[RMDB]
Background:
The data come from the RNA Mapping Database (RMDB), library TTRDES. The record gives the reactivity of an RNA of 177 nucleotides to 2A3 and DMS. The 2A3 profile rests on 17,829 reads. Conditions: 150 mM KOAc, 10 mM MgCl2 and 150 mM bicine (pH 8.5), 24 C. For 2A3 the reverse transcriptase was SuperScript II with manganese. The DMS profile rests on 10,708 reads.
RNA sequence: GGGAACGACUCGAGUAGAGUCGAAAAGAUAUGGAAGGUUCCAUGGAGCCUACAUCGGAAACGAUGUCAGGGCGUUGAAAUGGACCUUCCUAAGUCAAACGACAAACAUGUUCGCAUGUUUGUCGAAGAAGGGGAAUAAGUUCGCUUAUUCCCCUUCAAAAGAAACAACAACAACAAC
Reactivity to 2A3 in 0.01 (KOAc 150mM, MgCl2 10mM, bicine 150mM(pH8.5), 24C), signal-to-noise 6, nucleotides 027 to 126: g000a020u040a020u090g000g020a010a000g050g010u300u180c020c010a010u050g080g090a020g010c010c010u020a000c000a010u000c000g000g020a030a030a020c020g010a000u010g050u140c250a140g060g080g000c020g100u230u220g080a050a030a000u000g000g000a000c000c000u000u020c000c000u000a010a010g000u010c010a060a070a110c030g000a000c000a000a010a000c000a010u010g030u120u100c300g000c200a000u010g000u010u030u030g000u000c000g000a030a040
Reactivity to DMS in 0.01 (KOAc 150mM, MgCl2 10mM, bicine 150mM(pH8.5), 24C), signal-to-noise 6, nucleotides 027 to 126: g000a030u000a300u000g000g000a030a010g010g010u000u020c000c010a010u000g020g010a150g020c000c010u000a050c000a000u000c000g010g010a080a070a170c000g010a010u000g000u010c300a100g020g010g020c000g020u010u010g000a130a240a020u000g000g000a030c000c000u000u000c000c000u000a000a070g000u000c020a110a110a300c020g000a020c000a000a010a010c010a010u010g010u010u010c280g020c000a010u010g010u000u000u000g010u000c000g010a050a060